RNA sequence: GGGAACGACUCGAGUAGAGUCGAAAACUUCGUGAACCAGCGACGAUGCAUUAGGUCCUUCGUUAUCUAACCGAACCAUCGUUACUAGUGUUUGAAUAAAUCAAGAUAGGCAGGCUAUCAUAGAAAGAAGUAUUGUGUUAUUCGUAGCACGGUGCUUAAAAGAAACAACAACAACAAC
Reactivity to DMS in 0.01 (KOAc 150mM, MgCl2 10mM, bicine 150mM(pH8.5), 24C), signal-to-noise 9, nucleotides 027 to 126: c040u000u010c040g010u010g000a040a040c010c020a020g010c020g010a010c010g000a000u000g000c020a020u020u010a110g000g000u000c110c100u030u020c140g010u020u020a070u030c110u020a120a030c010c010g000a150a160c300c010a010u000c010g010u000u000a120c020u000a050g020u020g010u010u000u000g000a090a080u030a060a060a060u020c090a080a070g000a030u010a020g000g010c140a090g010g000c010u000a020u000c010a080u020a110g000a070a070a070g000
Reactivity to 2A3 in 0.01 (KOAc 150mM, MgCl2 10mM, bicine 150mM(pH8.5), 24C), signal-to-noise 9, nucleotides 027 to 126: c010u070u060c030g130u090g050a030a020c010c000a010g010c010g020a000c000g000a000u000g010c000a010u030u070a010g000g010u030c010c020u090u090c060g110u050u120a090u050c050u050a020a020c010c000g000a000a000c000c000a000u000c000g000u000u000a010c000u020a020g040u010g030u100u020u020g060a060a030u100a080a060a050u130c070a060a010g010a020u020a010g020g050c070a020g080g000c010u010a000u010c020a020u040a030g120a020a090a010g080
The data come from the RNA Mapping Database (RMDB), library OK1LIB.
Chemical mapping of a 177-nucleotide RNA with DMS and 2A3.
For 2A3 the reverse transcriptase was SuperScript II with manganese.
The RNA was probed in 150 mM KOAc, 10 mM MgCl2 and 150 mM bicine (pH 8.5) at 24 C.